This 177-nucleotide RNA was probed chemically with 2A3. For 2A3 the reverse transcriptase was SuperScript II with manganese. Reactivities are given for positions 27 through 126.
[RMDB]
RNA sequence: GGGAACGACUCGAGUAGAGUCGAAAAUAGCUACUUUAAUCGAUCAUUCAUUCAGUCGCUUCCCGGGAAACCAAAGCUUUUGGGCUCCGGGGGAAGAAUGGUUGCAAAGCUGAAACUUAAAGGAAUUCUUCCAAUCAGGAUUCGUCCUGAUUGGAAGAAAAGAAACAACAACAACAAC
Reactivity to 2A3 in 0.01 (KOAc 150mM, MgCl2 10mM, bicine 150mM(pH8.5), 24C), signal-to-noise 2, nucleotides 027 to 126: u090a010g000c010u000a000c040u110u040u190a100a010u230c010g000a000u040c000a020u020u010c010a040u030u020c030a020g210u120c120g110c110u090u080c020c000c000g000g020g000a120a100a000c010c000a000a000a070g300c110u080u180u090u010g000g000g000c020u000c040c000g020g000g000g000g020a020a020g030a000a000u010g000g000u040u010g000c050a260a030a000g010c030u070g060a090a010a010c010u030u170a110a020a000g150g000a050a040u020u020